[RMDB]
RNA sequence: GGGAACGACUCGAGUAGAGUCGAAAAGAUACCAUAACAGAACUUGGAGCUAUUGGCUCUUGACACUUAAGGCUAUAAAUAUAGGCGACAAAGCUCCUCUUCCUAUAUCGUUGGGACAAGUGCAUAACUUAAUGCCGUAUUUCGAUACGGCAUUAAGAAAAGAAACAACAACAACAAC
Reactivity to 2A3 in 0.01 (KOAc 150mM, MgCl2 10mM, bicine 150mM(pH8.5), 24C), signal-to-noise 2, nucleotides 027 to 126: g050a030u160a030c020c010a000u110a110a100c100a060g100a110a040c060u110u130g000g030a000g000c030u070a130u300u210g040g000c070u070c020u030u020g010a040c000a000c050u030u040a040a030g060g000c010u020a010u010a210a240a060u170a050u050a070g020g050c030g010a010c060a030a120a000g020c020u010c000c030u000c020u050u020c000c000u000a040u020a010u120c030g110u110u050g030g000g050a040c040a060a030g040u030g050c040a050u060a180a070
Reactivity to DMS in 0.01 (KOAc 150mM, MgCl2 10mM, bicine 150mM(pH8.5), 24C), signal-to-noise 4, nucleotides 027 to 126: g010a120u000a100c020c020a080u010a090a080c120a120g000a070a100c120u020u000g000g020a040g030c030u010a150u010u020g010g020c040u000c030u000u020g020a110c080a030c050u010u000a100a090g000g000c030u020a050u000a070a090a070u000a030u010a050g010g010c300g010a030c110a040a070a100g010c050u000c010c020u000c100u010u000c010c010u000a030u000a020u010c090g050u020u000g000g010g000a030c050a050a030g020u000g020c060a070u020a040a130
This 177-nucleotide RNA was probed chemically with 2A3 and DMS. The data come from the RNA Mapping Database (RMDB), library OK2TRN. 2A3 adducts were read by reverse transcription with SuperScript II with manganese.